[RMDB]
The record gives the reactivity of an RNA of 177 nucleotides to DMS. Reactivities are given for positions 27 through 126. The DMS profile rests on 759 reads.
RNA sequence: GGGAACGACUCGAGUAGAGUCGAAAAUGGGUACAAGUGGGGUGCUAGACCCCCAAAAAGUCCCCUCAAAAGGGACACAUCUAAGGGCUUGAUAGUCUAUGAUGAAUGACACCAAGAGUUGGCUGAUUGACUAAAUACUGUUCGCAGUAUUUAGUCAAAAAGAAACAACAACAACAAC
Reactivity to DMS in 0.01 (KOAc 150mM, MgCl2 10mM, bicine 150mM(pH8.5), 24C), signal-to-noise 2, nucleotides 027 to 126: u000g050g010g010u010a110c130a070a080g010u030g050g010g010g010u000g000c090u030a130g030a110c050c000c000c030c030a000a040a080a160a060g000u010c000c010c040c000u000c290a090a050a130a150g010g010g020a070c000a160c060a000u030c010u000a110a190g000g000g000c010u000u020g030a120u000a030g030u010c010u000a300u030g000a030u020g010a130a030u000g000a090c110a040c000c030a070a080g000a080g010u010u000g000g000c030u000g000a230u000